The data come from the RNA Mapping Database (RMDB), library OK1LIB.
Structure probing data (2A3 and DMS) for a 177-nucleotide construct.
Reactivities are given for positions 27 through 126.
The reactions ran in a buffer of 150 mM KOAc, 10 mM MgCl2 and 150 mM bicine (pH 8.5), at 24 C.

RNA sequence: GGGAACGACUCGAGUAGAGUCGAAAAGUCGUGGACGAGGCUCACAAGGCGCUGGCGAACCUGAGCACCAUCACGGCGCAGCGCAUCUUGGGCCUCCCGUGCUUGCGCCGCCUGGUGCUGACUGGGAGAUCCGUAGUCCUUUCGAGGACUACGGAUCAAAAGAAACAACAACAACAAC
Reactivity to 2A3 in 0.01 (KOAc 150mM, MgCl2 10mM, bicine 150mM(pH8.5), 24C), signal-to-noise 2, nucleotides 027 to 126: g100u070c030g030u050g010g010a080c060g040a060g040g020c020u020c060a070c010a070a050g050g010c010g010c070u030g060g050c010g020a100a120c000c000u070g020a000g010c020a020c080c000a020u090c060a010c050g000g000c000g000c000a000g000c030g000c020a070u070c030u130u200g020g000g000c000c020u080c000c000c000g000u010g000c010u100u070g000c010g000c000c010g010c010c000u020g010g000u010g000c020u000g020a030c020u030g020g040g010a200
Reactivity to DMS in 0.01 (KOAc 150mM, MgCl2 10mM, bicine 150mM(pH8.5), 24C), signal-to-noise 2, nucleotides 027 to 126: g000u010c010g040u040g010g000a080c070g000a070g000g000c000u000c000a070c160a010a200g000g000c050g010c000u010g000g000c040g000a040a190c010c010u000g000a020g000c010a080c090c020a020u000c280a230c040g000g000c010g000c000a000g000c070g020c050a060u020c160u030u060g030g000g010c040c030u000c040c030c060g000u000g020c030u030u010g010c000g000c010c000g000c300c080u030g000g030u000g010c030u030g000a080c040u000g000g000g010a150